[RMDB]
RNA sequence: GGGAACGACUCGAGUAGAGUCGAAAACUCGCCAAUGGAGCGCAACUACUGAACGGCCGAGGGGCGCGUCACGCAUCGCUACAUCGACUAUCUGGAGGCGCGUACACGCGGUGACGAUCCGCGGGCCUAGGGUUCCAGAAUUCGUUCUGGAACCCUAAAAAGAAACAACAACAACAAC
Reactivity to DMS in 0.01 (KOAc 150mM, MgCl2 10mM, bicine 150mM(pH8.5), 24C), signal-to-noise 2, nucleotides 027 to 126: c050u010c030g020c060c050a130a140u020g010g020a050g050c040g010c160a080a100c070u000a120c090u000g010a110a070c060g010g010c000c000g010a110g020g000g020g000c000g000c010g010u000c050a050c100g010c080a070u010c050g000c050u000a070c080a100u010c040g020a100c120u000a080u000c110u010g010g000a070g000g020c120g010c070g010u000a090c090a180c030g000c000g020g020u010g000a110c120g000a090u010c010c010g000c010g010g000g000c040c040
Reactivity to 2A3 in 0.01 (KOAc 150mM, MgCl2 10mM, bicine 150mM(pH8.5), 24C), signal-to-noise 1, nucleotides 027 to 126: c000u000c020g050c020c020a030a150u200g080g020a130g010c020g000c020a100a050c060u300a010c040u070g110a080a000c080g040g000c010c000g080a080g020g010g060g000c040g050c030g050u020c010a020c070g000c020a020u100c040g000c020u090a120c040a130u150c040g040a020c100u120a110u130c010u020g050g020a040g030g000c000g010c020g080u010a030c100a000c040g000c040g000g090u050g080a030c090g040a080u080c000c000g040c000g000g000g050c000c000

Chemical mapping of a 177-nucleotide RNA with DMS and 2A3. The DMS profile rests on 1,102 reads. Source: RMDB library OK2TST, as collected in RNAgym. For 2A3, 900 sequencing reads were counted. For DMS the reverse transcriptase was MarathonRT.